[RMDB]
RNA sequence: GGGAACGACUCGAGUAGAGUCGAAAAACUAGUAUGUACAGGGGUAAUUUGACCUGUCAUCUAGACAACUUACCAGGUACUCAAAGGUAAGUUGGUUGAGUACCACAGAGUACGAACUAAGUACUCAGACUAUGCUUGCCUUCGGGUAAGUAUAGUCAAAAGAAACAACAACAACAAC
Reactivity to DMS in 0.01 (KOAc 150mM, MgCl2 10mM, bicine 150mM(pH8.5), 24C), signal-to-noise 9, nucleotides 027 to 126: a090c010u000a010g000u060a010u000g010u060a010c010a000g000g000g010g020u040a080a150u020u040u040g020a110c000c000u000g010u000c000a000u000c000u000a000g000a160c070a030a040c060u000u000a070c010c000a120g000g010u020a060c130u010c100a040a080a070g000g000u010a030a040g010u000u000g000g010u020u010g000a080g010u010a090c000c020a100c190a090g000a010g000u000a000c000g000a110a140c220u050a100a110g010u000a010c000u000c000a160
Reactivity to 2A3 in 0.01 (KOAc 150mM, MgCl2 10mM, bicine 150mM(pH8.5), 24C), signal-to-noise 9, nucleotides 027 to 126: a000c000u000a000g050u140a040u020g030u060a010c000a000g030g030g040g060u180a180a280u110u110u260g200a100c000c000u000g000u000c000a000u000c000u000a000g030a050c030a020a020c020u030u050a030c000c010a020g060g050u040a060c030u030c110a070a040a020g060g010u040a040a050g040u010u020g010g000u020u070g030a020g010u020a020c010c010a030c060a050g000a000g000u000a000c010g080a160a060c080u150a170a010g000u000a000c000u000c000a000
An RNA of 177 nucleotides, treated with DMS and 2A3 and read out base by base.
It was measured as part of the RMDB library OK1LIB.
The DMS profile rests on 33,902 reads.
The reactions ran in a buffer of 150 mM KOAc, 10 mM MgCl2 and 150 mM bicine (pH 8.5), at 24 C.